This 207-nucleotide RNA was probed chemically with 2A3. The reactions ran in a buffer of 150 mM KOAc, 10 mM MgCl2 and 150 mM bicine (pH 8.5), at 24 C.

RNA sequence: GGGAACGACUCGAGUAGAGUCGAAAAUAGCGAAGUAGGAUUUUAUGCGUCAAGUGUUCACAGGCUGGGGAAUCGCCGUGAAACGAAAAGCAGAAAGCGUGCUGCUUACGAUAUAAUUUCCGCACCCAUAAGAAGUCUCUGUUCGCAGAGACUUCAAACGUACGAUCAACUUCGGUUGAUCGUACGUAAAAGAAACAACAACAACAAC
Reactivity to 2A3 in 0.01 (KOAc 150mM, MgCl2 10mM, bicine 150mM(pH8.5), 24C), signal-to-noise 2, nucleotides 027 to 156: u130a010g040c020g060a150a040g090u070a010g020g020a010u030u000u000u010a000u030g010c000g030u040c090a030a010g020u020g020u130u020c010a010c080a120g010g010c020u100g020g010g000g060a060a040u170c040g000c000c000g010u010g000a060a000a000c020g000a020a020a020a020g000c030a020g050a100a200a010g150c140g090u170g020c010u000g000c010u010u000a000c000g000a010u000a000u010a100a010u000u010u030c000c000g000c030a040c060c020c000a050u080a080a060g000a000a000g010u000c000u000c000u000g020u030u020c160g000c070a000g000a000g000a000c000u020u000c000a000a000

For 2A3 the reverse transcriptase was SuperScript II with manganese.
It was measured as part of the RMDB library M2RFPK.
Reactivities are given for positions 27 through 156.